RNA sequence: GGGAACGACUCGAGUAGAGUCGAAAAGAGCUAGAAGAUAUGGAUGUAUGCGAAUACGGGAGCUCUGAGCUCGGAAACGAGCUCUGAGCAUCGAUCGGGGUAGAUACAUCCUAAGUCACAAUUACAACGUUUCUCAUGAGUUCGCUCAUGAGAAACGAAAAGAAACAACAACAACAAC
Reactivity to 2A3 in 0.01 (KOAc 150mM, MgCl2 10mM, bicine 150mM(pH8.5), 24C), signal-to-noise 1, nucleotides 027 to 126: g030a010g060c030u150a070g070a300a040g010a160u030a020u200g010g020a000u000g040u010a020u100g300c020g000a130a000u070a120c000g040g000g040a010g000c000u000c000u050g000a000g000c000u000c010g000g000a100a040a030c020g000a010g020c000u000c000u000g000a000g000c000a040u160c020g010a010u070c000g000g000g080g020u020a100g020a080u000a000c010a000u000c000c000u000a030a010g000u000c000a000c050a110a270u300u240a210c080a220a050
Reactivity to DMS in 0.01 (KOAc 150mM, MgCl2 10mM, bicine 150mM(pH8.5), 24C), signal-to-noise 2, nucleotides 027 to 126: g010a170g040c110u000a060g000a140a080g010a010u000a260u000g000g000a010u000g010u000a030u010g010c030g030a050a200u030a050c020g000g000g000a040g010c000u000c000u000g000a000g010c010u000c030g010g000a070a060a160c000g010a000g010c000u000c000u000g000a000g030c000a140u000c130g020a050u000c010g010g000g010g020u010a090g020a040u000a010c000a010u010c000c000u010a070a080g020u030c030a190c140a080a090u010u010a120c210a080a130
An RNA of 177 nucleotides, treated with 2A3 and DMS and read out base by base. The reactions ran in a buffer of 150 mM KOAc, 10 mM MgCl2 and 150 mM bicine (pH 8.5), at 24 C. For DMS, 1,102 sequencing reads were counted. In probing experiments dimethyl sulfate is read out at A N1 and C N3, which are open when not base-paired. 2A3 adducts were read by reverse transcription with SuperScript II with manganese. Source: RMDB library TTRDEL, as collected in RNAgym.